[RMDB]
RNA sequence: GGGAACGACUCGAGUAGAGUCGAAAAGAGUUACGAAAUAAUGUUACUCGUACACGCACGGAAAAGUGACGUGCGUCGGAAGCUCAAGACGACGCAUGUUAGAAAAGGCUUCCUGGAAUUUAAGAAAGGGUAUAUGAUACUUCGGUAUCAUAUACCCAAAAGAAACAACAACAACAAC
Reactivity to 2A3 in 0.01 (KOAc 150mM, MgCl2 10mM, bicine 150mM(pH8.5), 24C), signal-to-noise 4, nucleotides 027 to 126: g040a000g000u040u080a000c020g080a090a120a260u300a180a120u300g020u000u070a000c000u010c010g070u150a020c090a010c110g010c010a050c060g050g060a050a010a010a050g080u070g020a010c000g000u010g000c000g000u000c000g020g050a040a040g030c060u040c140a090a080g150a040c010g000a030c030g020c080a030u030g000u010u010a030g060a010a100a000a010g030g010c000u000u000c000c000u000g090g050a120a100u070u180u290a150a040g100a150a040a060
Reactivity to DMS in 0.01 (KOAc 150mM, MgCl2 10mM, bicine 150mM(pH8.5), 24C), signal-to-noise 3, nucleotides 027 to 126: g010a050g000u000u010a010c020g020a070a110a140u060a090a140u050g000u010u010a010c050u000c000g010u000a030c140a060c040g000c040a020c060g010g030a050a060a090a110g000u020g000a040c010g020u000g010c000g010u000c020g000g010a080a130g020c180u040c160a060a070g040a090c010g000a010c010g000c020a010u030g010u000u000a050g010a060a040a150a150g010g000c060u000u000c010c000u000g000g000a110a100u040u020u030a050a050g010a090a080a110
This 177-nucleotide RNA was probed chemically with 2A3 and DMS. For 2A3 the reverse transcriptase was SuperScript II with manganese. For DMS the reverse transcriptase was MarathonRT. For DMS, 5,213 sequencing reads were counted.